Conditions: 150 mM KOAc, 10 mM MgCl2 and 150 mM bicine (pH 8.5), 24 C. An RNA of 177 nucleotides, treated with 2A3 and DMS and read out base by base. Values cover nucleotides 27 to 126. For 2A3 the reverse transcriptase was SuperScript II with manganese. For 2A3, 4,138 sequencing reads were counted. DMS adducts were read by reverse transcription with MarathonRT.
RNA sequence: GGGAACGACUCGAGUAGAGUCGAAAAGUAAUCCCAGCACUUUGGGAGGCUGAGGCUGGCAGAUCAUUUGAGGCCAGGAGCUCAAGACCAGCCUGGCCAACAUGGCAAAACUCUGUCUCUAAAUACAACAGUAGUUCUAGUUCGCUAGAACUACUGUAAAAGAAACAACAACAACAAC
Reactivity to 2A3 in 0.01 (KOAc 150mM, MgCl2 10mM, bicine 150mM(pH8.5), 24C), signal-to-noise 3, nucleotides 027 to 126: g030u040a010a100u010c000c000c010a020g090c050a030c060u200u130u090g110g000g010a030g020g000c000u030g030a010g030g000c070u030g020g050c050a040g020a250u080c030a100u020u130u150g060a040g000g020c020c020a050g030g020a050g030c030u050c130a120a040g040a100c000c030a010g020c000c000u000g010g000c010c000a010a000c020a030u040g030g000c020a020a040a030a150c050u060c010u050g020u030c000u000c000u060a100a100a010u260a060c120a080
Reactivity to DMS in 0.01 (KOAc 150mM, MgCl2 10mM, bicine 150mM(pH8.5), 24C), signal-to-noise 4, nucleotides 027 to 126: g010u010a100a100u010c040c000c000a130g010c100a050c100u010u000u010g010g000g030a090g010g010c010u000g010a060g010g010c040u000g000g020c080a080g000a110u010c090a090u000u000u010g010a260g010g020c010c030a040g020g010a080g000c080u020c080a060a080g000a080c120c100a050g000c010c000u000g010g000c030c020a030a100c080a050u010g010g000c100a080a090a050a090c060u010c030u010g010u000c010u000c030u000a050a050a080u010a070c230a120